[RMDB]
RNA sequence: GGGAACGACUCGAGUAGAGUCGAAAAGCGUUCGGCCUUGCCAUUGGUCUGUGGGCGGUAAGGUCGGGUAAAGCGGUGCUUGAUGCCCAGCUCAUGGCACAGCGCGGCGAAGGCGCGGCUGCGAAAACACUAUCACGUCAUUCGUGACGUGAUAGUGAAAAGAAACAACAACAACAAC
Reactivity to 2A3 in 0.01 (KOAc 150mM, MgCl2 10mM, bicine 150mM(pH8.5), 24C), signal-to-noise 4, nucleotides 027 to 126: g050c010g040u040u030c010g020g000c020c000u000u010g010c000c020a110u080u160g140g000u090c080u090g100u180g080g050g010c050g010g000u020a010a020g010g000u020c020g000g010g000u200a160a130a010g030c040g070g010u030g000c000u030u050g040a100u250g090c020c000c000a020g000c010u030c040a130u130g060g010c040a030c040a050g050c050g010c020g030g000c040g050a090a040g040g010c020g000c020g100g000c010u040g010c020g040a090a050a000a010
Reactivity to DMS in 0.01 (KOAc 150mM, MgCl2 10mM, bicine 150mM(pH8.5), 24C), signal-to-noise 4, nucleotides 027 to 126: g020c070g010u000u000c020g010g010c010c000u000u020g000c010c020a160u020u020g020g020u000c050u000g030u010g020g010g030c060g000g020u000a030a020g010g030u000c000g000g020g010u000a030a070a100g020c020g010g030u000g010c020u000u000g000a210u010g000c030c000c050a250g010c070u000c070a060u000g010g000c070a110c090a050g010c050g000c210g020g000c040g020a100a070g000g000c040g010c050g000g010c000u010g010c040g000a060a080a090a160